[RMDB]
RNA sequence: GGGAACGACUCGAGUAGAGUCGAAAAAUAGCGGGAUGUCGUCUGUUGGGCCGAGAAUGCGGGCCAAGCAGCGGGUUGAAGCGAUUUACGCAAAUCCGGCUACCGCAAUCGGGAAAAGAUGCUUGUGCACCGAAUAUCCUUUCGAGGAUAUUCGGUGAAAAGAAACAACAACAACAAC
Reactivity to DMS in 0.01 (KOAc 150mM, MgCl2 10mM, bicine 150mM(pH8.5), 24C), signal-to-noise 2, nucleotides 027 to 126: a060u020a090g010c050g000g020g000a030u010g010u000c000g010u000c040u040g020u030u010g020g000g000c020c000g000a100g040a100a100u020g010c030g030g010g000c050c070a020a030g010c040a030g010c040g000g020g000u020u000g010a130a120g020c020g020a300u020u020u040a160c010g020c040a110a050a020u010c000c010g010g010c020u000a090c000c000g020c030a070a030u010c020g000g020g000a070a040a090a060g000a050u030g000c060u000u000g030u050g020
Reactivity to 2A3 in 0.01 (KOAc 150mM, MgCl2 10mM, bicine 150mM(pH8.5), 24C), signal-to-noise 3, nucleotides 027 to 126: a000u130a020g080c060g000g010g010a080u140g050u040c010g000u000c020u020g050u050u020g010g030g000c040c010g050a040g040a170a060u190g170c020g000g030g030c040c020a050a010g010c020a010g070c030g000g020g030u040u090g120a120a030g010c010g020a000u070u140u230a120c010g000c010a020a010a040u030c010c000g020g000c030u040a040c000c000g000c000a010a060u070c030g000g000g090a030a050a030a030g110a040u140g030c040u050u080g020u040g060
Record summary:
This 177-nucleotide RNA was probed chemically with DMS and 2A3. Reactivities are given for positions 27 through 126. The RNA was probed in 150 mM KOAc, 10 mM MgCl2 and 150 mM bicine (pH 8.5) at 24 C. For 2A3 the reverse transcriptase was SuperScript II with manganese. It was measured as part of the RMDB libraries RFM100 and RFMREP. Reactivities are rounded to 0.1 and cut off at 0 and 3. For DMS the reverse transcriptase was MarathonRT.